[RMDB]
The record gives the reactivity of an RNA of 177 nucleotides to DMS and 2A3. For DMS, 3,702 sequencing reads were counted. Conditions: 150 mM KOAc, 10 mM MgCl2 and 150 mM bicine (pH 8.5), 24 C. Source: RMDB library TTRDES, as collected in RNAgym. DMS adducts were read by reverse transcription with MarathonRT.
RNA sequence: GGGAACGACUCGAGUAGAGUCGAAAAGAUAUGGAUCCGAACGGCUUCAACAGCGUGGUUCGGAAACGAACCACGACAUGAAGUCCGUCGGAUCCUAAGUCAAAAUCAACAUCUUCGGAUGUUGAAAGCUUAAACACUUGUUCGCAAGUGUUUAAGCAAAAGAAACAACAACAACAAC
Reactivity to DMS in 0.01 (KOAc 150mM, MgCl2 10mM, bicine 150mM(pH8.5), 24C), signal-to-noise 3, nucleotides 027 to 126: g000a020u010a300u020g000g010a010u000c000c000g010a120a090c020g010g000c010u000u030c000a050a130c300a230g000c000g040u000g010g010u000u000c000g010g000a020a030a110c020g000a000a010c000c000a010c000g000a030c090a150u000g000a020a010g000u010c010c000g020u000c000g000g000a000u000c000c000u000a010a070g010u000c050a090a080a170a150u010c000a000a010c000a010u000c000u010u010c230g030g000a010u000g000u010u000g000a010a080a090
Reactivity to 2A3 in 0.01 (KOAc 150mM, MgCl2 10mM, bicine 150mM(pH8.5), 24C), signal-to-noise 3, nucleotides 027 to 126: g050a000u060a020u180g020g010a000u000c010c000g030a170a050c010g020g000c010u040u020c040a170a160c020a200g070c020g010u000g020g000u020u010c030g000g010a020a000a000c000g020a000a010c010c020a000c050g050a040c020a020u070g010a020a010g290u020c000c040g000u000c000g000g010a000u020c000c000u010a010a000g000u010c040a010a000a010a300u040c000a000a000c000a010u000c010u100u090c300g160g010a010u000g000u010u010g000a050a000a000